RNA sequence: GGGAACGACUCGAGUAGAGUCGAAAAGUUCGAGGAAAGGCAGGAGACCUUCCUCCUUUCCCACCAGCAGGGCAUCGUCGUAGAAGGCGAAGGUGGAGGUGCUGCACCGCGAACGGUAGUCCAUCAAACCCUCAAAAAGUUUCGACUUUUUGAGGGUAAAAGAAACAACAACAACAAC
Reactivity to DMS in 0.01 (KOAc 150mM, MgCl2 10mM, bicine 150mM(pH8.5), 24C), signal-to-noise 5, nucleotides 027 to 126: g010u010u000c070g020a080g010g010a040a050a060g010g020c110a070g020g010a110g010a160c140c070u000u010c000c000u000c000c000u000u000u000c010c010c030a100c090c070a120g010c090a080g000g010g000c140a090u000c030g010u000c020g010u000a140g010a100a150g000g000c040g010a040a060g010g030u000g000g020a090g010g000u000g010c030u010g000c050a100c040c020g010c050g000a030a030c020g000g020u000a100g010u010c020c010a090u010c130a090a100
Reactivity to 2A3 in 0.01 (KOAc 150mM, MgCl2 10mM, bicine 150mM(pH8.5), 24C), signal-to-noise 3, nucleotides 027 to 126: g030u030u060c060g010a050g040g000a210a000a000g070g000c110a030g030g110a130g060a190c030c030u080u040c010c000u020c010c010u030u050u020c000c000c000a020c020c020a020g090c030a040g010g010g010c030a070u050c030g040u020c010g020u090a030g070a300a070g060g000c010g020a010a000g020g000u030g000g030a040g000g040u070g020c010u030g000c010a030c040c020g010c020g020a020a010c000g030g010u080a020g040u000c010c010a010u040c020a120a070